RNA sequence: GGGAACGACUCGAGUAGAGUCGAAAAUAAAAGUCGAAAGUAUUGCUAUAGUUAAGGUUGCGCUUGCCUAUUUAGGCAUACUUCUCAGGAUGGCGCGUUGCAGUCCAACAAGAUCCAGGGACUGUACCCUUAUCUUGGUCUUCGGACCAAGAUAAGGAAAAGAAACAACAACAACAAC
Reactivity to DMS in 0.01 (KOAc 150mM, MgCl2 10mM, bicine 150mM(pH8.5), 24C), signal-to-noise 1, nucleotides 027 to 126: u010a080a060a060a070g000u030c050g000a070a060a050g000u010a010u010u000g050c030u010a070u000a070g010u000u010a060a020g000g000u000u000g010c120g020c030u000u000g000c060c000u000a100u000u000u000a070g000g000c020a000u000a000c060u000u000c100u000c080a120g030g010a170u010g020g000c030g030c030g000u030u010g000c020a000g000u000c000c000a060a120c140a100a120g010a110u030c030c020a140g010g020g010a020c030u000g020u010a060c300
Reactivity to 2A3 in 0.01 (KOAc 150mM, MgCl2 10mM, bicine 150mM(pH8.5), 24C), signal-to-noise 1, nucleotides 027 to 126: u020a000a040a000a000g090u010c080g100a120a040a000g030u030a050u130u250g000c030u050a040u070a270g090u130u090a170a010g010g070u050u140g000c050g040c060u110u140g020c000c000u060a120u180u230u150a060g010g000c000a000u010a000c010u070u000c060u000c060a070g100g050a090u100g010g020c010g000c020g040u030u060g000c010a000g010u000c000c010a030a040c010a130a070g020a090u040c020c040a020g000g000g010a000c000u010g000u020a020c000

Source information
This 177-nucleotide RNA was probed chemically with DMS and 2A3. For 2A3 the reverse transcriptase was SuperScript II with manganese. Values cover nucleotides 27 to 126.